[RMDB]
RNA sequence: GGGAACGACUCGAGUAGAGUCGAAAACGCACUCGCAGCUUAAUAACCUGCGCUGAGCCCUUCUCCCCCAGCUUGCCUUUGUCCUAGGGAAUUGGAAGGUCAUCCUUCACAGGAUCGUGUGGAAGUCAUUACUCGUGAGUGUUCGCACUCACGAGAAGUAUUACUUCUUGUUCGCAAGAAGUAAUACAAAAGAAACAACAACAACAAC
Reactivity to DMS in 0.01 (KOAc 150mM, MgCl2 10mM, bicine 150mM(pH8.5), 24C), signal-to-noise 4, nucleotides 027 to 156: c070g020c030a100c040u000c030g020c030a030g000c020u000u000a130a140u000a120a140c220c010u000g010c020g030c110u000g000a090g010c020c020c040u000u000c040u000c020c020c010c020c030a140g020c040u000u010g030c000c040u010u000u000g020u000c030c030u000a140g020g000g010a060a080u010u000g030g020a030a060g000g020u000c070a130u010c010c010u000u010c090a110c100a120g000g010a060u010c050g030u010g010u010g010g000a070a300g010u000c050a110u010u000a170c010u000c010g020u000g000a020g030u000g010u000u000c280g000c000a020c000u010c010a010c000g010a000g010a010a110
Reactivity to 2A3 in 0.01 (KOAc 150mM, MgCl2 10mM, bicine 150mM(pH8.5), 24C), signal-to-noise 4, nucleotides 027 to 156: c060g010c010a060c020u030c000g000c000a000g000c010u040u040a020a020u040a060a050c000c010u010g020c010g030c160u030g040a040g030c010c010c000u110u040c090u060c000c010c000c000c000a010g020c030u040u090g020c020c020u090u070u130g050u050c010c030u020a050g000g060g080a070a080u150u070g020g020a020a030g050g000u050c020a060u080c000c010u070u060c020a020c020a070g050g000a050u030c040g020u060g020u060g090g010a010a030g020u050c040a080u090u170a050c000u000c000g000u000g000a000g000u010g020u030u050c090g020c050a010c000u000c000a000c000g000a000g000a000a000

An RNA of 207 nucleotides, treated with DMS and 2A3 and read out base by base. Conditions: 150 mM KOAc, 10 mM MgCl2 and 150 mM bicine (pH 8.5), 24 C.